An RNA of 207 nucleotides, treated with DMS and 2A3 and read out base by base.
RNA sequence: GGGAACGACUCGAGUAGAGUCGAAAAUGGCAGGUCUGGAAAAGGACACAUUCAAGGAAAAGUACGAUGGCUAUUCUUUAAAGAAGUGUUUCAAAGACAGGAAGAUAGAACUCAAAACAGAAACCAUCGAAGAAAUCGACGCCCUCAUUUUGGCUGACGAAUGGAAAUUAUUCGUAAUUUCCAUUCGAAAAGAAACAACAACAACAAC
Reactivity to DMS in 0.01 (KOAc 150mM, MgCl2 10mM, bicine 150mM(pH8.5), 24C), signal-to-noise 3, nucleotides 027 to 156: u010g000g010c010a060g030g030u010c070u000g000g010a100a070a140a130g000g010a080c040a110c050a110u010u000c070a070a120g010g000a060a050a100a110g030u000a100c040g030a040u000g030g030c010u000a160u010u000c040u000u010u010a050a090a100g010a080a130g030u000g030u000u000u000c060a070a090a160g010a110c070a050g020g010a070a080g020a140u000a120g020a050a090c040u010c050a040a050a060a160c060a140g000a090a080a050c040c030a040u000c000g020a090a120g010a040a080a090u010c030g000a130c070g010c020c010c050u000c080a160u000u000u000u000g020g000c020u000g030a180
Reactivity to 2A3 in 0.01 (KOAc 150mM, MgCl2 10mM, bicine 150mM(pH8.5), 24C), signal-to-noise 5, nucleotides 027 to 156: u040g020g000c020a020g030g030u030c030u060g080g050a050a060a020a050g040g010a010c020a010c010a140u070u090c040a040a030g030g010a060a070a030a030g050u080a050c060g010a030u020g010g000c030u040a060u060u040c020u040u150u170a110a150a030g070a050a040g020u040g020u040u070u080c100a130a110a030g040a040c060a050g030g050a030a020g020a040u080a030g080a040a030c020u040c070a040a040a060a070c030a030g060a060a070a080c020c010a010u030c010g010a030a020g030a040a090a020u070c050g010a010c040g030c010c010c000u020c030a080u040u110u080u090g020g010c020u040g030a010
Values cover nucleotides 27 to 156.